[RMDB]
RNA sequence: GGGAACGACUCGAGUAGAGUCGAAAAGCAGCGACAUUCACAAGGAAUCGGCCACCGCUGGGGUCACACGGCGUUGGUUUAAAUUACGUGAAUCGCCCUGGUCCGGCCCGUCGAUCGGCUAAGUCCAGGGUUAAAUCCAAAUAGAUCGACUAAGCAUUCUCUAUAUACAGUUCGCUGUAUAUAGAGAAAAAGAAACAACAACAACAAC
Reactivity to 2A3 in 0.01 (KOAc 150mM, MgCl2 10mM, bicine 150mM(pH8.5), 24C), signal-to-noise 2, nucleotides 027 to 156: g010c020a000g030c020g050a050c040a070u040u030c030a020c030a090a110g120g030a080a060u100c060g010g000c000c010a010c020c000g000c010u010g020g000g010g090u110c030a020c010a010c130g000g000c020g020u010u020g000g050u030u180u000a030a070a050u190u120a030c060g020u020g000a000a010u000c000g020c030c000c000u000g010g000u030c080c060g000g000c010c010c000g000u000c010g000a000u000c000g000g030c010u050a050a020g010u000c000c000a010g000g010g000u010u010a000a010a010u110c060c020a010a010a010u010a020g000a000u000c000g000a000c000u070a100a010g020c020a070u030

Source: RMDB library ARCHII, as collected in RNAgym. Structure probing data (2A3) for a 207-nucleotide construct. Reactivities are given for positions 27 through 156.